[RMDB]
RNA sequence: GGGAACGACUCGAGUAGAGUCGAAAAGUGAGCCAAGAUCACGCCACUGCACUCCAGCCUGGUGACAGAGUGAGACUCCAUCUCAGAAAAUAACAAAAAAUUCAAAAAAUUAGCCAGUCGUGGUGGCACAGGCCUGUAAUCCCAGCUACUCGGGAGGGAUGUGAUUCAUAUUCGUAUGAAUCACAUCAAAAGAAACAACAACAACAAC
Reactivity to 2A3 in 0.01 (KOAc 150mM, MgCl2 10mM, bicine 150mM(pH8.5), 24C), signal-to-noise 3, nucleotides 027 to 156: g060u020g050a070g000c070c030a150a040g080a110u200c090a030c090g010c010c010a000c020u040g000c010a030c060u100c060c030a030g040c020c010u010g020g000u070g040a050c050a050g100a070g080u050g010a020g020a030c020u040c030c060a100u010c010u000c010a000g110a020a060a010a040u210a060a030c090a050a090a050a050a070a050u190u190c120a100a060a050a050a070a170u160u100a030g010c000c010a000g010u060c030g020u050g020g000u010g000g000c020a010c020a020g030g000c000c010u030g040u060a040a030u010c000c000c000a020g040c010u060a050c020u030c070g040g000g010a070g050g090
Reactivity to DMS in 0.01 (KOAc 150mM, MgCl2 10mM, bicine 150mM(pH8.5), 24C), signal-to-noise 1, nucleotides 027 to 156: g000u040g020a080g030c080c040a080a160g030a060u010c020a050c010g030c010c010a120c050u000g010c030a090c010u000c030c000a100g010c050c020u000g060g010u010g020a200c080a110g010a070g030u000g000a160g020a070c010u000c060c010a220u010c010u000c010a180g000a120a050a060a100u010a090a270c060a000a000a070a010a050a160u030u020c040a020a010a040a090a080a090u000u000a170g030c000c000a140g020u010c040g030u000g070g030u000g000g010c060a080c090a070g000g030c000c030u010g000u010a040a130u000c030c000c020a190g000c070u010a030c030u000c050g000g030g010a050g030g000
Record summary: The record gives the reactivity of an RNA of 207 nucleotides to 2A3 and DMS. The data come from the RNA Mapping Database (RMDB), library OK3TST. 2A3 adducts were read by reverse transcription with SuperScript II with manganese. For DMS the reverse transcriptase was MarathonRT.